Structure probing data (DMS and 2A3) for a 177-nucleotide construct. DMS adducts were read by reverse transcription with MarathonRT. The RNA was probed in 150 mM KOAc, 10 mM MgCl2 and 150 mM bicine (pH 8.5) at 24 C. For 2A3, 3,238 sequencing reads were counted.
[RMDB]
RNA sequence: GGGAACGACUCGAGUAGAGUCGAAAAGACGCCUGAUGGCGAACGUGCGCAAGAUAAGAAUGGUGGUAUAUACUGCCGAGAAUAACUAAUGGACGGCAGAGCGCACGCACCACCACAGUCCACCAGACCUAUCCGUGGUGUUCGCACCACGGAUAGGAAAAGAAACAACAACAACAAC
Reactivity to DMS in 0.01 (KOAc 150mM, MgCl2 10mM, bicine 150mM(pH8.5), 24C), signal-to-noise 2, nucleotides 027 to 126: g000a130c020g000c010c000u000g000a140u010g000g090c000g040a010a080c010g000u000g040c020g050c010a230a090g000a110u030a110a060g040a090a110u000g030g010u000g000g000u000a180u000a130u060a140c000u000g000c000c000g000a080g010a300a100u060a040a080c300u010a130a130u020g000g030a170c030g000g000c020a000g000a110g000c000g000c000a000c020g010c110a150c020c040a130c110c140a060c140a160g010u010c000c000a100c000c010a050g020a170
Reactivity to 2A3 in 0.01 (KOAc 150mM, MgCl2 10mM, bicine 150mM(pH8.5), 24C), signal-to-noise 3, nucleotides 027 to 126: g040a020c000g040c020c000u230g220a180u240g010g000c000g000a050a020c000g000u010g000c000g000c020a050a020g000a300u120a120a080g040a040a050u070g000g000u000g000g000u000a070u000a000u050a230c000u000g000c000c020g040a030g070a060a160u300a090a020c080u100a120a020u220g120g080a040c030g010g000c000a000g030a050g040c000g010c000a000c010g010c010a030c010c010a070c030c000a090c030a030g090u000c000c000a000c000c000a020g090a090